Source information: This 170-nucleotide RNA was probed chemically with 2A3 and DMS. Conditions: 150 mM KOAc, 10 mM MgCl2 and 150 mM bicine (pH 8.5), 24 C. For 2A3 the reverse transcriptase was SuperScript II with manganese. DMS adducts were read by reverse transcription with MarathonRT.
RNA sequence: GGGAACGACUCGAGUAGAGUCGAAAAAUCGGAGACCCGGGCCCCCUCCCAGGAAAGGGAACAGGGGGAAAUCGACCGGGUCCCGCAGAACCCGAUGGAGUCCCCCACCAUCCCUUCCGGAUGAAACUAGGACCCACGUUCGCGUGGGUCAAAAGAAACAACAACAACAAC
Reactivity to 2A3 in 0.01 (KOAc 150mM, MgCl2 10mM, bicine 150mM(pH8.5), 24C), signal-to-noise 2, nucleotides 027 to 129: a000u090c000g010g000a140g020a090c000c000c000g000g010g000c020c000c000c000c010u010c000c000c000a040g160g050a270a090a020g010g010g000a050a010c060a120g070g000g000g000g050a010a010a100u210c060g140a100c000c000g000g000g000u000c000c000c000g000c020a000g020a120a130c000c000c000g000a040u040g040g000a010g100u030c020c000c020c000c000a000c000c000a000u030c000c000c000u070u060c030c020g000g000a060u030g000a050a010a020c060u010a060g130
Reactivity to DMS in 0.01 (KOAc 150mM, MgCl2 10mM, bicine 150mM(pH8.5), 24C), signal-to-noise 2, nucleotides 027 to 129: a130u000c100g010g030a210g020a050c000c010c020g010g000g010c000c040c040c000c020u040c000c040c000a090g020g100a080a190a070g050g010g010a290a040c270a130g020g000g010g010g060a040a000a030u000c280g000a120c080c010g000g020g290u020c000c000c010g010c100a190g020a070a130c020c010c000g020a100u010g020g010a040g010u050c000c000c000c000c000a100c100c000a070u000c000c000c070u000u010c000c130g030g000a000u000g030a000a000a000c000u050a040g010